The record gives the reactivity of an RNA of 207 nucleotides to 2A3 and DMS.
Source: RMDB library OK3TST, as collected in RNAgym.
For 2A3, 1,535 sequencing reads were counted.
2A3 adducts were read by reverse transcription with SuperScript II with manganese.
For DMS the reverse transcriptase was MarathonRT.
For DMS, 5,223 sequencing reads were counted.
[RMDB]
RNA sequence: GGGAACGACUCGAGUAGAGUCGAAAAGUGUUGGUCCGUUUGUGACCGGGCUUUCAUCUGGACUGGGAGGUGCUGUUGGUUAUCUUGUCGGCAGUGUCGUUGAUGAUGUUGCCGAUACUGCAAAGCCCAUGACCGAUGGUGGGCACCAGCAAUCAGACGAAAGAUGCAUUUUCGAAUGCAUCUUUCGAAAAGAAACAACAACAACAAC
Reactivity to 2A3 in 0.01 (KOAc 150mM, MgCl2 10mM, bicine 150mM(pH8.5), 24C), signal-to-noise 2, nucleotides 027 to 156: g060u040g060u150u050g050g000u010c040c040g010u080u140u300g200u230g070a030c020c000g010g010g000c000u060u100u090c040a040u020c030u080g040g030a050c010u010g000g050g000a070g020g030u070g030c010u010g010u040u020g030g020u070u060a090u160c030u040u100g010u010c000g010g000c000a010g000u010g000u030c020g080u110u170g090a230u180g010a010u010g020u040u000g000c000c000g010a010u010a010c000u010g070c030a080a060a030g000c010c030c010a010u070g040a020c020c060g050a060u070g040g050u020g010g120g060c000a010c040c000a020g000c020a030a070u110c020a050g020a100
Reactivity to DMS in 0.01 (KOAc 150mM, MgCl2 10mM, bicine 150mM(pH8.5), 24C), signal-to-noise 2, nucleotides 027 to 156: g020u000g040u000u010g040g030u000c020c020g030u020u000u000g020u000g010a040c030c010g000g020g020c020u010u000u010c060a090u000c060u000g040g000a100c040u000g030g010g010a120g040g000u000g040c000u000g010u010u000g010g020u010u000a130u000c070u000u000g000u000c000g010g020c010a000g020u010g010u000c000g030u030u000g000a130u000g010a060u000g020u000u000g000c030c040g030a020u000a000c090u000g030c100a110a130a110g030c040c020c020a060u000g000a270c060c060g020a060u000g030g030u000g010g090g060c030a040c090c020a070g030c010a060a130u000c070a100g010a270